[RMDB]
The record gives the reactivity of an RNA of 207 nucleotides to 2A3 and DMS. DMS adducts were read by reverse transcription with MarathonRT. 2A3 is a SHAPE reagent: it acylates the 2'-hydroxyl of flexible nucleotides of all four kinds.
RNA sequence: GGGAACGACUCGAGUAGAGUCGAAAAAUAAGUCACACAACACAACUUUCAAGACUCUGAUAGGCAGUCCAGAAUCAGGGUAUAUGACUGAUUUCGUCUCUGCUAAUGUGAGCAAGUUAGUGAAUUGGGUUAGAUGUGAAGCUAUGAUGCUAGCACAACAACUCUCAUGAUUCGUCAUGAGAGUUGUAAAAGAAACAACAACAACAAC
Reactivity to 2A3 in 0.01 (KOAc 150mM, MgCl2 10mM, bicine 150mM(pH8.5), 24C), signal-to-noise 5, nucleotides 027 to 156: a000u180a040a050g030u040c030a020c010a010c020a070a070c050a040c030a200a110c080u090u230u170c100a140a070g060a200c020u000c010u050g060a070u050a110g070g010c060a020g090u070c080c020a060g080a030a030u000c000a010g050g020g040u070a080u020a040u170g090a040c010u000g010a000u030u060u060c030g030u020c010u000c000u040g030c010u060a060a090u160g060u060g040a010g010c020a050a070g010u070u110a030g010u040g140a110a170u060u080g020g000g010u070u100a080g010a170u050g040u020g040a030a020g000c010u050a070u250g050a000u150g070c030u040a040g040c060a010c000a110
Reactivity to DMS in 0.01 (KOAc 150mM, MgCl2 10mM, bicine 150mM(pH8.5), 24C), signal-to-noise 3, nucleotides 027 to 156: a090u000a120a080g000u000c020a010c050a100c040a080a070c020a050c040a050a100c100u000u020u000c060a190a170g020a050c000u000c030u010g030a130u000a230g000g030c070a050g040u010c010c010a160g000a040a030u000c020a130g000g000g070u010a120u010a080u010g000a080c000u010g000a060u000u000u000c020g020u010c020u000c010u000g000c010u000a060a070u000g000u000g010a050g030c010a090a110g020u000u010a130g020u000g030a050a050u000u000g010g010g010u000u000a050g030a180u020g010u010g010a080a140g000c060u000a100u020g010a110u000g010c030u000a080g000c020a090c050a090

About this RNA: 2A3 adducts were read by reverse transcription with SuperScript II with manganese. The reactions ran in a buffer of 150 mM KOAc, 10 mM MgCl2 and 150 mM bicine (pH 8.5), at 24 C.